[RMDB]
RNA sequence: GGGAACGACUCGAGUAGAGUCGAAAACAGUGACUGGUACCUACAUGCCAUGAUCAUGACUAGUCUAGACGGAUCGCGAUCGCUAGGAUCGAGAGGUACGUACGCUAGUCUCGACUAGGUGGAUCCGGUCCCCCUUACCGUUCGCGGUAAGGGGGACAAAAGAAACAACAACAACAAC
Reactivity to DMS in 0.01 (KOAc 150mM, MgCl2 10mM, bicine 150mM(pH8.5), 24C), signal-to-noise 2, nucleotides 027 to 126: c170a100g030u000g000a090c030u020g050g000u000a100c070c050u000a090c250a140u000g040c050c000a090u000g000a170u010c030a120u000g010a040c020u000a000g010u010c080u010a210g000a070c030g030g020a060u000c030g010c050g000a000u000c000g030c230u000a100g020g010a020u010c010g000a040g220a040g010g010u000a060c030g010u000a060c230g000c000u000a050g010u000c000u000c090g000a050c030u010a130g010g010u000g010g020a160u000c000c030g020
Reactivity to 2A3 in 0.01 (KOAc 150mM, MgCl2 10mM, bicine 150mM(pH8.5), 24C), signal-to-noise 2, nucleotides 027 to 126: c050a040g030u010g070a020c010u060g060g030u110a110c010c050u120a050c050a100u110g060c030c010a060u090g050a270u020c020a030u050g070a030c000u010a010g020u000c030u020a030g010a060c040g000g040a030u030c020g000c020g040a020u000c010g000c240u200a120g220g170a030u000c000g020a010g000a020g100g080u050a040c040g030u010a010c080g000c040u030a020g030u030c010u000c020g000a000c000u010a030g060g030u040g100g000a010u000c010c010g040

This 177-nucleotide RNA was probed chemically with DMS and 2A3.
The data come from the RNA Mapping Database (RMDB), library OK2TRN.
Conditions: 150 mM KOAc, 10 mM MgCl2 and 150 mM bicine (pH 8.5), 24 C.
For DMS the reverse transcriptase was MarathonRT.